[RMDB]
RNA sequence: GGGAACGACUCGAGUAGAGUCGAAAAAAGAUAGUGACGAAAAGCACUCAUUCUCAAAGGGUAUCGUGUGGGGAUACUUUACUCAAGCGGAGGAGACGUUCAAGGAGAUGGAAGAUGCCCUGUGCGUAUUUUUGACAACCUUGAAUCAGCUGAUCACUGUACUAGGAAACUUCGGUUUCCUAGUACAAAAAGAAACAACAACAACAAC
Reactivity to 2A3 in 0.01 (KOAc 150mM, MgCl2 10mM, bicine 150mM(pH8.5), 24C), signal-to-noise 7, nucleotides 027 to 156: a000a010g090a040u150a030g010u010g020a060c040g080a130a090a030a020g020c010a010c020u030c010a060u090u010c020u020c040a060a060a030g040g000g010u050a030u090c040g000u040g030u050g050g030g000g010a010u030a050c000u020u030u010a030c030u030c040a060a020g040c030g050g010a040g030g020a020g010a030c060g020u010u010c030a020a020g030g010a070g020a030u060g020g010a020a020g010a030u030g010c010c020c070u090g050u070g010c030g020u060a070u030u040u010u030u070g070a050c020a030a080c010c000u020u030g070a100a020u120c030a030g040c020u060g040a060u100c070a010c090
Reactivity to DMS in 0.01 (KOAc 150mM, MgCl2 10mM, bicine 150mM(pH8.5), 24C), signal-to-noise 3, nucleotides 027 to 156: a060a100g020a100u010a100g040u000g010a130c050g000a110a100a080a220g040c030a140c030u000c050a120u010u000c020u000c050a090a080a100g010g000g020u000a030u000c020g010u000g030u010g020g030g000g000a120u000a020c050u010u020u000a070c010u000c060a100a070g010c110g000g030a150g020g000a050g000a110c070g000u020u000c040a040a030g000g010a060g000a190u020g010g010a040a100g000a030u000g020c030c020c050u000g010u000g040c100g030u000a020u000u010u000u010u010g010a090c060a050a170c010c010u010u020g000a020a050u000c060a060g020c020u000g000a120u000c040a110c140